The data come from the RNA Mapping Database (RMDB), library OK3TST. Chemical mapping of a 207-nucleotide RNA with DMS and 2A3. DMS adducts were read by reverse transcription with MarathonRT. The 2A3 profile rests on 8,231 reads.

[RMDB]
RNA sequence: GGGAACGACUCGAGUAGAGUCGAAAACACAUGCGCAUCUCGUUCGCUUUUGGAACAUACAUCCGAACCGCAGUUACCUGACCAGAAGAAUCCAGCUUACGCAGAAUAGGAUAGAUAGGGUUAUCAAAUUCGUGCGCGAAGGUGUACGUUAGCGAGAGUGUUAGUUACAAUUCGUUGUAACUAACACAAAAGAAACAACAACAACAAC
Reactivity to DMS in 0.01 (KOAc 150mM, MgCl2 10mM, bicine 150mM(pH8.5), 24C), signal-to-noise 3, nucleotides 027 to 156: c040a060c100a090u000g000c020g010c050a280u000c030u000c010g010u000u000c030g020c040u000u000u000u000g020g020a130a070c020a090u000a040c030a050u000c020c010g010a120a090c060c000g080c020a060g010u000u000a050c050c040u000g010a140c030c010a190g020a110a150g000a120a100u010c010c000a100g000c030u000u000a050c080g000c190a170g000a070a070u000a050g020g000a080u000a020g010a060u000a140g030g020g010u010u000a080u000c020a020a080a170u000u000c100g040u000g020c060g010c000g030a070a030g010g030u000g040u000a020c030g010u000u000a050g020c040g040a060g000a130
Reactivity to 2A3 in 0.01 (KOAc 150mM, MgCl2 10mM, bicine 150mM(pH8.5), 24C), signal-to-noise 8, nucleotides 027 to 156: c090a010c010a050u170g000c030g000c020a110u010c010u010c020g050u090u030c030g040c030u100u120u110u180g080g030a030a020c020a020u060a020c010a020u020c020c010g020a050a040c020c010g000c010a010g020u050u060a040c000c010u020g060a050c040c000a070g050a140a010g030a050a100u010c020c010a010g040c040u080u100a060c140g030c080a010g050a160a180u160a140g010g010a010u020a010g090a040u110a050g070g000g010u050u050a090u140c050a030a020a040u160u060c080g100u050g010c010g000c010g030a020a010g020g010u000g000u010a010c020g010u010u030a020g010c010g010a010g010a010